[RMDB]
The data come from the RNA Mapping Database (RMDB), library M2RFPK.
An RNA of 207 nucleotides, treated with 2A3 and DMS and read out base by base.
For 2A3 the reverse transcriptase was SuperScript II with manganese.
The reactions ran in a buffer of 150 mM KOAc, 10 mM MgCl2 and 150 mM bicine (pH 8.5), at 24 C.
Reactivities are given for positions 27 through 156.
RNA sequence: GGGAACGACUCGAGUAGAGUCGAAAACGUCCCCGUCGUACAGAAUGGUAACAUAUCUCUCCAAAUAUCUGAGCUUGGGUAUACUGGGAAACCCAACCCCUUGGGAAGAUUGGGUAUAUGGCUAAAUUACAUCGAUUGUACUUCGGUACAAUCGAAAUCACUGAAUAAUCUUCGGAUUAUUCAGUGAAAAAGAAACAACAACAACAAC
Reactivity to 2A3 in 0.01 (KOAc 150mM, MgCl2 10mM, bicine 150mM(pH8.5), 24C), signal-to-noise 6, nucleotides 027 to 156: c040g100u030c000c010c020c010g140u100c020g010u080a080c050a100g100a140a190u140g050g020u090a140a040c020a040u090a040u050c090u020c020u030c090c030a070a110a120u140a080u040c040u030g010a000g050c010u030u040g020g000g000u050a070u040a180c080u070g030g000g030a170a140a140c010c010c020a020a040c010c000c000c010u010u040g030g000g030a020a020g020a040u020u060g000g000g030u030a020u000a000u040g030g000c020u060a100a090a090u150u130a060c050a080u020c010g010a000u000u000g000u000a000c000u000u040c180g030g000u000a000c000a000a000u000c000g000a010a000a000
Reactivity to DMS in 0.01 (KOAc 150mM, MgCl2 10mM, bicine 150mM(pH8.5), 24C), signal-to-noise 2, nucleotides 027 to 156: c060g050u000c000c000c000c100g010u010c090g050u010a120c040a070g010a120a040u000g030g010u020a070a130c010a100u010a090u010c030u010c050u000c040c010a010a130a150u000a070u000c070u020g000a130g010c040u000u000g060g030g000u000a050u010a120c050u000g020g010g000a130a100a120c040c000c000a030a040c040c010c010c080u000u000g010g010g020a150a020g010a110u000u000g030g010g010u010a090u010a080u010g030g040c040u000a040a100a100u000u010a090c100a210u000c010g020a030u000u000g000u000a000c010u000u010c290g050g010u000a020c010a020a000u000c000g000a000a030a050